[RMDB]
RNA sequence: GGGAACGACUCGAGUAGAGUCGAAAAGGAAACAAGUCAAGUAACUGCUCCAAUCAGAUUAAUAUCAGUGACGUCCUCUAUCCGAGGACAAUAUAUUAAAUGGAUAAAAGGAGCAGGAGAAAAAAAAGUUAUGAGUAAUCUUCGGAUUACUCAUAACAAAAGAAACAACAACAACAAC
Reactivity to DMS in 0.01 (KOAc 150mM, MgCl2 10mM, bicine 150mM(pH8.5), 24C), signal-to-noise 2, nucleotides 027 to 126: g000g020a100a090a060c110a050a110g000u000c040a080a070g020u000a110a140c000u000g000c020u000c020c000a080a150u000c010a070g000a090u000u010a020a010u000a010u000c150a160g000u000g010a110c190g010u010c020c000u000c010u000a060u020c300c210g010a030g020g000a010c000a040a000u000a020u000a000u000u000a000a020a070u000g000g000a040u000a060a060a060a210g000g000a010g010c010a000g000g000a110g020a000a000a000a060a120a030a100a200
Reactivity to 2A3 in 0.01 (KOAc 150mM, MgCl2 10mM, bicine 150mM(pH8.5), 24C), signal-to-noise 1, nucleotides 027 to 126: g120g000a070a010a000c070a130a020g050u150c030a060a010g020u020a120a010c000u020g020c000u000c000c030a000a070u030c010a010g100a240u030u000a010a000u000a000u050c090a060g140u030g210a090c130g010u010c000c000u000c030u150a200u120c090c060g000a010g000g000a000c000a000a000u010a000u010a000u030u040a010a040a010u090g020g000a010u030a180a200a070a090g010g000a000g000c000a000g030g000a020g060a030a130a020a060a000a000a000a050
The record gives the reactivity of an RNA of 177 nucleotides to DMS and 2A3.
Conditions: 150 mM KOAc, 10 mM MgCl2 and 150 mM bicine (pH 8.5), 24 C.
Reactivities are given for positions 27 through 126.
DMS adducts were read by reverse transcription with MarathonRT.
The DMS profile rests on 1,024 reads.